Notes: This 177-nucleotide RNA was probed chemically with DMS and 2A3. Reactivities are given for positions 27 through 126. The reactions ran in a buffer of 150 mM KOAc, 10 mM MgCl2 and 150 mM bicine (pH 8.5), at 24 C. The data come from the RNA Mapping Database (RMDB), library OK1LIB. For DMS, 2,645 sequencing reads were counted.
RNA sequence: GGGAACGACUCGAGUAGAGUCGAAAACAUGCGCGUAAGAACAGCCGCGUUCAUGCAGAGUCAAGAGCCCUUCUGGUUCGUUGCGUGACUGUAGAAAUAUACAUCUUGCGACUGAGCGUCGGCUCGGUCUAGGCAUCGGGUUCGCUCGGUGUCUAGAAAAAGAAACAACAACAACAAC
Reactivity to DMS in 0.01 (KOAc 150mM, MgCl2 10mM, bicine 150mM(pH8.5), 24C), signal-to-noise 1, nucleotides 027 to 126: c080a030u020g000c020g040c010g010u000a050a070g020a050a060c150a040g010c290c040g000c210g070u040u100c080a120u060g120c300a300g010a300g040u070c180a020a190g020a150g000c010c010c100u030u010c080u010g000g020u010u000c020g000u000u010g000c050g020u000g000a020c070u000g000u000a090g000a210a200a280u090a220u030a100c160a220u040c070u040u010g090c210g040a210c070u020g010a010g010c030g000u060c140g000g000c000u010c010g000g010
Reactivity to 2A3 in 0.01 (KOAc 150mM, MgCl2 10mM, bicine 150mM(pH8.5), 24C), signal-to-noise 3, nucleotides 027 to 126: c030a040u150g010c030g000c010g080u000a070a040g070a140a030c030a040g040c050c000g000c000g020u060u070c050a050u230g020c070a040g030a010g300u140c040a060a100g010a020g040c040c000c000u090u050c030u080g040g000u000u010c010g040u060u060g010c020g040u040g000a030c040u020g010u050a030g100a230a280a020u300a040u030a080c040a070u010c020u030u140g000c040g050a000c100u230g000a000g050c050g150u220c130g290g040c020u020c010g010g030